This 177-nucleotide RNA was probed chemically with DMS and 2A3.
[RMDB]
RNA sequence: GGGAACGACUCGAGUAGAGUCGAAAACUAUGCGACUUCGGUCGCAUAGAAAAGGUGCAUCGUAGGGUACCGAAGUACGAUUAAAGCUCAAAAGAGCUAAAAAAAGCACGCCCUUCGGGGCGUGCAACGUUUAUUCCAAGUUCGCUUGGAAUAAACGAAAAGAAACAACAACAACAAC
Reactivity to DMS in 0.01 (KOAc 150mM, MgCl2 10mM, bicine 150mM(pH8.5), 24C), signal-to-noise 1, nucleotides 027 to 126: c000u000a010u010g000c000g020a010c020u000u020c200g060g010u020c000g020c010a000u010a010g000a040a060a070a080g000g000u010g020c090a020u000c170g000u010a050g010g010g020u000a060c010c030g010a070a090g000u030a010c070g000a080u000u000a080a150a060g020c010u000c000a060a070a080a150g010a000g020c000u000a000a000a050a020a090a020a100g000c010a010c020g020c000c000c000u000u020c160g030g000g010g000c000g010u000g000c000a000a030
Reactivity to 2A3 in 0.01 (KOAc 150mM, MgCl2 10mM, bicine 150mM(pH8.5), 24C), signal-to-noise 2, nucleotides 027 to 126: c020u030a010u020g010c000g020a000c010u020u070c190g110g000u030c010g000c000a000u000a010g020a030a030a000a030g020g000u030g010c020a020u050c100g100u150a070g170g000g040u020a030c010c010g010a040a010g080u070a010c040g020a010u100u210a300a170a020g000c000u000c030a150a230a270a080g000a010g000c020u060a070a100a000a000a000a000a050g000c000a020c020g000c010c000c080u020u020c190g020g070g040g030c040g000u000g010c010a000a000
About this RNA:
Values cover nucleotides 27 to 126. Conditions: 150 mM KOAc, 10 mM MgCl2 and 150 mM bicine (pH 8.5), 24 C.